The data come from the RNA Mapping Database (RMDB), library OK3TST. An RNA of 207 nucleotides, treated with 2A3 and DMS and read out base by base. The RNA was probed in 150 mM KOAc, 10 mM MgCl2 and 150 mM bicine (pH 8.5) at 24 C. For DMS, 2,518 sequencing reads were counted.
RNA sequence: GGGAACGACUCGAGUAGAGUCGAAAAAAGCAGCUUUUGGAGACAGCCGAACGGCGUUUGAAUAGUAGCCUUGAAAGGCGGGGUGAGUGUGCUGUGUUAGCUGUAUCCCUUCAUUCUCAAAUGAGAUGGGUUUCUGAGAGUCUUGAUAAAUUGUCCACCUCUUACAUUUCUUCGGAAAUGUAAGAGGAAAAGAAACAACAACAACAAC
Reactivity to 2A3 in 0.01 (KOAc 150mM, MgCl2 10mM, bicine 150mM(pH8.5), 24C), signal-to-noise 3, nucleotides 027 to 156: a010a020g050c040a010g030c040u050u020u110u070g050g010a040g020a050c050a030g030c030c050g060a050a020c060g040g030c030g070u100u210u010g050a050a040u100a050g070u030a030g000c000c030u000u060g100a180a130a020g020g010c040g020g000g000g000u060g010a090g020u140g030u050g010c010u020g000u040g010u140u060a020g000c020u010g020u060a090u090c000c000c010u080u050c030a050u090u000c020u020c010a170a290a070u150g010a030g020a050u050g020g020g030u060u060u010c040u060g040a060g000a020g110u020c010u100u040g030a040u080a190a220a070u140u120g050u080c020c050a010
Reactivity to DMS in 0.01 (KOAc 150mM, MgCl2 10mM, bicine 150mM(pH8.5), 24C), signal-to-noise 1, nucleotides 027 to 156: a080a090g020c010a070g000c020u000u000u000u000g040g030a230g030a070c050a090g060c010c020g000a090a040c060g000g020c030g000u000u010u000g000a150a140u020a100g020u020a170g000c000c050u020u030g000a100a120a160g010g020c020g020g000g020g000u000g040a110g030u020g020u010g000c040u050g020u000g000u000u020a080g020c000u000g010u000a090u010c020c000c010u020u020c070a130u000u000c030u010c060a050a050a090u010g000a080g040a120u010g010g000g000u000u000u010c040u000g010a100g000a090g020u000c030u000u000g010a110u010a060a100a100u020u000g010u020c000c020a230